[RMDB]
RNA sequence: GGGAACGACUCGAGUAGAGUCGAAAACAACUGAAAGAGAUGGCCUCAUUCACGGUCGGAUCGAUCCUUGUGAACACCGCAAGCGUCCUGAAAGAAAGCUUUGCACAGAAAGUGCUCACGACACCUCCAGCGAUUGCGCGUUCGCGCGCAAUCGCUGAAAAGAAACAACAACAACAAC
Reactivity to 2A3 in 0.01 (KOAc 150mM, MgCl2 10mM, bicine 150mM(pH8.5), 24C), signal-to-noise 1, nucleotides 027 to 126: c000a010a010c070u150g050a030a030a030g090a000g000a060u080g000g000c010c000u040c150a300u170u100c060a000c190g000g000u030c010g000g030a110u110c050g000a010u000c080c130u010u000g010u000g080a070a000c030a050c050c000g000c000a020a000g000c080g090u000c010c020u050g070a160a000a000g060a000a040a000g060c000u000u300u200g050c060a040c010a010g300a000a030a000g000u000g030c000u000c090a070c120g070a100c000a060c000c010u050c060
An RNA of 177 nucleotides, treated with 2A3 and read out base by base. The RNA was probed in 150 mM KOAc, 10 mM MgCl2 and 150 mM bicine (pH 8.5) at 24 C. The 2A3 profile rests on 385 reads. Reactivities are given for positions 27 through 126.